[RMDB]
Source: RMDB library OK1LIB, as collected in RNAgym. The record gives the reactivity of an RNA of 177 nucleotides to 2A3 and DMS. For 2A3 the reverse transcriptase was SuperScript II with manganese. For DMS, 1,251 sequencing reads were counted. The reactions ran in a buffer of 150 mM KOAc, 10 mM MgCl2 and 150 mM bicine (pH 8.5), at 24 C.
RNA sequence: GGGAACGACUCGAGUAGAGUCGAAAAUCAUCCGUACCCUUUCAUCCGUGCGUAAGGCGGUUCUGAGUCGCAACACCGAUGUUCUUUUUCCCAGAUACGCCUGCAGGGGGAUGAACAGCAACAUGAAUAAUCCUAGCGGGUUCGCCCGCUAGGAUUAAAAAGAAACAACAACAACAAC
Reactivity to 2A3 in 0.01 (KOAc 150mM, MgCl2 10mM, bicine 150mM(pH8.5), 24C), signal-to-noise 1, nucleotides 027 to 126: u120c000a010u040c050c000g080u150a150c010c000c000u010u000u060c000a000u000c000c040g170u080g030c040g030u060a070a030g010g000c030g000g000u000u010c000u000g020a080g130u010c000g060c030a020a060c030a030c120c110g080a120u040g040u040u300c100u000u150u130u100u120c000c000c000a000g000a000u000a000c070g000c010c000u000g040c030a030g160g180g000g000g000a000u030g000a000a000c000a020g040c000a000a050c060a270u140g040a100a110
Reactivity to DMS in 0.01 (KOAc 150mM, MgCl2 10mM, bicine 150mM(pH8.5), 24C), signal-to-noise 1, nucleotides 027 to 126: u010c040a090u010c040c050g100u030a130c040c010c000u000u070u000c000a010u000c010c020g000u000g020c200g000u030a100a070g000g010c000g020g010u000u010c010u020g000a000g000u040c060g000c020a040a150c160a010c130c040g040a060u010g010u000u020c100u000u000u010u000u000c000c000c000a100g000a130u000a160c040g000c040c000u000g060c110a160g090g010g000g000g000a010u010g000a040a060c300a100g000c160a030a020c030a170u000g040a130a060